[RMDB]
RNA sequence: GGGAACGACUCGAGUAGAGUCGAAAAGCGGUGGGGGCUGCGCCGGAUGGUUGGCGGCCGUUGCUGUAGCGGAGGGCGAUUCAGCCGGUCGUGUUGACAGCCCUACACGUUUGUGUAGAGUGCCCUACAUGACCGACACGCAUAUGACUCAAGCCGAAUAUACCCUGAGAUUCGUCUCAGGGUAUAUAAAAGAAACAACAACAACAAC
Reactivity to 2A3 in 0.01 (KOAc 150mM, MgCl2 10mM, bicine 150mM(pH8.5), 24C), signal-to-noise 3, nucleotides 027 to 156: g040c070g020g100u100g070g040g000g010g020c010u020g030c010g040c010c030g100g060a210u150g060g040u080u130g160g000c010g000g030c000c030g060u030u030g010c030u020g020u040a030g000c020g010g010a080g090g070g000c040g040a050u120u100c040a010g040c010c000g000g010u040c010g000u000g010u020u040g030a080c080a020g000c000c020c030u000a010c010a020c010g090u120u240u300g010u000g000u000a030g060a030g080u150g010c090c030c000u010a010c000a010u010g000a000c000c020g030a030c050a030c080g070c040a000u090a050u250g050a000c020u060c100a010a070g000c040c030g030a000
Reactivity to DMS in 0.01 (KOAc 150mM, MgCl2 10mM, bicine 150mM(pH8.5), 24C), signal-to-noise 1, nucleotides 027 to 156: g040c070g030g030u000g000g000g000g020g010c040u000g010c070g010c020c010g030g020a090u000g030g010u000u000g020g020c030g030g050c060c030g020u000u000g030c020u030g010u000a150g010c060g000g000a200g000g060g000c030g010a200u000u000c110a150g030c000c000g000g020u000c010g050u000g030u010u000g020a040c050a280g000c000c000c010u000a000c000a000c000g030u000u000u020g030u000g010u000a010g010a030g060u010g000c000c020c070u010a030c020a030u000g010a030c000c000g030a010c030a060c120g040c060a090u000a100u010g010a090c040u000c010a060a070g000c000c030g020a140